Chemical mapping of a 207-nucleotide RNA with 2A3. Conditions: 150 mM KOAc, 10 mM MgCl2 and 150 mM bicine (pH 8.5), 24 C. Source: RMDB library M2RFPK, as collected in RNAgym. 2A3 adducts were read by reverse transcription with SuperScript II with manganese.

RNA sequence: GGGAACGACUCGAGUAGAGUCGAAAACCUACUCAAUACGUCCUCGUCGUACAGAACGGUAACAUGUUUUCCGAACAUCCGCGCUUGGGUAUACGAGUAUACACCUUACGCAACCCUCGCCAACGGGAGUGCAUCCACGAGUUCGCUCGUGGAUGAAUGUAAGUUGCUUGUUCGCAAGCAACUUACAAAAAGAAACAACAACAACAAC
Reactivity to 2A3 in 0.01 (KOAc 150mM, MgCl2 10mM, bicine 150mM(pH8.5), 24C), signal-to-noise 2, nucleotides 027 to 156: c000c000u060a030c020u020c050a110a090u100a170c000g060u060c020c020u030c050g050u030c010g020u080a000c030a080g100a160a050c020g030g040u100a090a030c100a150u140g030u030u040u030u030c060c020g000a060a010c030a090u040c000c030g000c000g050c020u030u050g010g020g000u040a120u000a100c040g010a030g080u000a000u040a050c100a110c030c030u070u060a010c010g000c080a050a030c000c000c000u010c030g060c040c000a090a020c040g000g010g020a010g040u090g100c000a000u000c010c000a000c010g010a000g010u060u120c170g050c020u000c000g080u010g000g000a000u000g000a010a010